RNA sequence: GGGAACGACUCGAGUAGAGUCGAAAAAUGGACCGCAUCCGCUUCGCCAUUGCCGAGGCGUCUUCCAGGGUGCGCAGCGCGCUCAAUUCCUUGAGGUCGCCGCCGGAGACGAAAGCUCGAUCGCCGGGAGGAUUUAUGCAUUCGUGCAUAAAUCCUCAAAAGAAACAACAACAACAAC
Reactivity to DMS in 0.01 (KOAc 150mM, MgCl2 10mM, bicine 150mM(pH8.5), 24C), signal-to-noise 3, nucleotides 027 to 126: a090u010g020g010a090c080c020g000c060a070u010c050c070g050c050u000u010c060g020c030c040a040u030u040g040c110c040g020a300g010g020c020g000u000c070u000u010c010c070a100g010g000g000u020g020c040g010c040a060g000c170g000c070g010c010u010c070a100a070u000u010c020c040u000u000g030a060g000g000u010c000g000c000c000g000c080c030g000g000a210g000a030c000g000a060a150a150g010c050u000c050g000a030u000c040g000c020c010g000g000
Reactivity to 2A3 in 0.01 (KOAc 150mM, MgCl2 10mM, bicine 150mM(pH8.5), 24C), signal-to-noise 7, nucleotides 027 to 126: a000u090g030g030a030c010c020g010c020a050u050c040c070g010c020u050u030c010g020c030c010a140u040u150g040c010c020g020a040g000g020c000g010u010c000u020u020c020c040a020g010g030g000u060g000c010g000c040a100g170c050g010c010g010c040u070c060a080a240u180u130c000c000u010u030g010a000g000g020u020c010g000c020c000g090c130c000g010g010a050g000a020c030g040a140a040a030g030c020u040c050g030a050u030c020g040c040c010g040g090

Chemical mapping of a 177-nucleotide RNA with DMS and 2A3. The 2A3 profile rests on 7,964 reads. The reactions ran in a buffer of 150 mM KOAc, 10 mM MgCl2 and 150 mM bicine (pH 8.5), at 24 C. For DMS the reverse transcriptase was MarathonRT.